Conditions: 150 mM KOAc, 10 mM MgCl2 and 150 mM bicine (pH 8.5), 24 C. Structure probing data (DMS and 2A3) for a 177-nucleotide construct. The DMS profile rests on 699 reads. 2A3 is a SHAPE reagent: it acylates the 2'-hydroxyl of flexible nucleotides of all four kinds. It was measured as part of the RMDB library M2PK90. 2A3 adducts were read by reverse transcription with SuperScript II with manganese.
[RMDB]
RNA sequence: GGGAACGACUCGAGUAGAGUCGAAAAGAAAAGAUACAGGCAAGUUGACCGCCUGAAUCGUAGGCAAAAUGACUUAAAGGAUCAGGUUAGCAACAAUGAGUCCUUAAAAUCGACUAAAAUAAAAAAACGUAUUUCUAAAGUUCGCUUUAGAAAUACGAAAAGAAACAACAACAACAAC
Reactivity to DMS in 0.01 (KOAc 150mM, MgCl2 10mM, bicine 150mM(pH8.5), 24C), signal-to-noise 1, nucleotides 027 to 126: g010a090a130a080a140g010a040u000a180c110a020g030g020c000a170a280g020u000u000g000a130c090c170g000c000c000u020g000a020a020u010c010g030u000a000g020g000c040a000a050a040a080u030g030a070c020u000u000a050a050a040g020g010a100u010c000a000g000g010u030u010a150g050c000a020a090c060a070a030u000g000a110g010u010c000c000u000u000a030a030a040a080u000c110g030a090c040u000a070a080a050a100u030a030a030a040a090a050a150a180
Reactivity to 2A3 in 0.01 (KOAc 150mM, MgCl2 10mM, bicine 150mM(pH8.5), 24C), signal-to-noise 1, nucleotides 027 to 126: g030a000a080a010a040g010a000u020a050c030a000g030g000c000a000a090g040u060u040g160a180c000c070g000c000c000u000g050a010a030u020c010g000u040a030g000g040c000a010a000a080a300u060g000a090c020u060u090a020a020a100g010g000a000u030c000a000g000g090u030u110a030g070c030a020a020c020a040a070u060g030a050g040u010c020c000u140u020a010a120a040a080u020c000g030a050c030u090a140a100a250a160u190a040a210a020a020a020a010a030